[RMDB]
RNA sequence: GGGAACGACUCGAGUAGAGUCGAAAAGAUAUGGACUUUGCAAGGGAGCUUCCCUUCGGAAACGAAGGACCAAGCGAGGAUCUUGUCAAAGUCCUAAGUCAAAAUCCCUUGCGUUCGCGCAAGGGAAUCAUAUCCAUUGCUUCGGCAAUGGAUAUGAAAAAGAAACAACAACAACAAC
Reactivity to DMS in 0.01 (KOAc 150mM, MgCl2 10mM, bicine 150mM(pH8.5), 24C), signal-to-noise 3, nucleotides 027 to 126: g020a020u010a220u010g000g010a000c000u000u000u010g010c010a010a010g020g000g000a030g010c010u000u010c130c000c000u010u010c020g000g000a030a030a070c010g010a030a020g000g000a090c150c300a010a020g000c000g000a070g010g010a020u010c000u000u000g010u000c050a020a020a010g000u000c000c000u000a010a030g010u000c020a140a100a140a160u000c000c000c000u010u000g010c000g010u000u000c300g030c030g030c000a020a000g010g000g000a010a000
Reactivity to 2A3 in 0.01 (KOAc 150mM, MgCl2 10mM, bicine 150mM(pH8.5), 24C), signal-to-noise 2, nucleotides 027 to 126: g000a000u010a020u080g010g000a000c010u030u040u030g000c020a010a010g000g030g040a070g000c000u000u000c030c000c000u010u010c010g000g000a010a010a000c010g010a010a010g020g020a030c220c240a010a000g020c010g050a220g110g030a040u010c000u000u030g140u220c030a020a000a040g000u000c000c000u000a000a000g000u000c000a030a020a040a280u080c000c000c000u000u010g010c020g030u030u060c300g000c000g000c160a020a020g000g020g030a000a020